[RMDB]
RNA sequence: GGGAACGACUCGAGUAGAGUCGAAAAGUAGUGAGGCAGCGUCGUCUACGACGUUCCACUAUGAAGCGGUCGGCAGGCUUUGGAAGUACGUGGACGAUGUAGAGUCUGCACGACAUGAGCAGGCAUGCCGUCAAGCAUCGUUCGCGAUGUUUGACGGAAAAGAAACAACAACAACAAC
Reactivity to 2A3 in 0.01 (KOAc 150mM, MgCl2 10mM, bicine 150mM(pH8.5), 24C), signal-to-noise 9, nucleotides 027 to 126: g050u060a000g010u000g040a050g020g000c010a010g000c010g000u000c000g000u000c020u020a020c020g010a000c050g170u030u000c010c000a030c010u100a160u300g060a050a020g020c030g060g050u110c030g070g030c060a050g050g000c000u060u060u070g020g020a030a000g030u100a110c030g010u020g040g010a010c010g020a020u030g020u040a010g010a010g020u000c010u020g070c020a050c030g050a010c020a090u170g020a040g030c060a020g050g030c040a040u130g050
Reactivity to DMS in 0.01 (KOAc 150mM, MgCl2 10mM, bicine 150mM(pH8.5), 24C), signal-to-noise 6, nucleotides 027 to 126: g010u010a020g000u010g010a040g000g010c030a060g000c010g000u000c000g010u000c020u000a020c000g010a030c070g000u000u000c010c010a110c240u030a090u030g010a090a100g010c020g010g000u000c050g010g000c050a060g000g020c030u000u000u000g000g010a030a000g000u010a040c020g020u000g000g000a020c000g010a030u010g010u020a040g010a120g010u000c000u000g000c020a090c040g020a080c110a080u010g000a100g020c010a040g000g010c070a100u020g000
This 177-nucleotide RNA was probed chemically with 2A3 and DMS. For DMS the reverse transcriptase was MarathonRT. 2A3 adducts were read by reverse transcription with SuperScript II with manganese. The RNA was probed in 150 mM KOAc, 10 mM MgCl2 and 150 mM bicine (pH 8.5) at 24 C.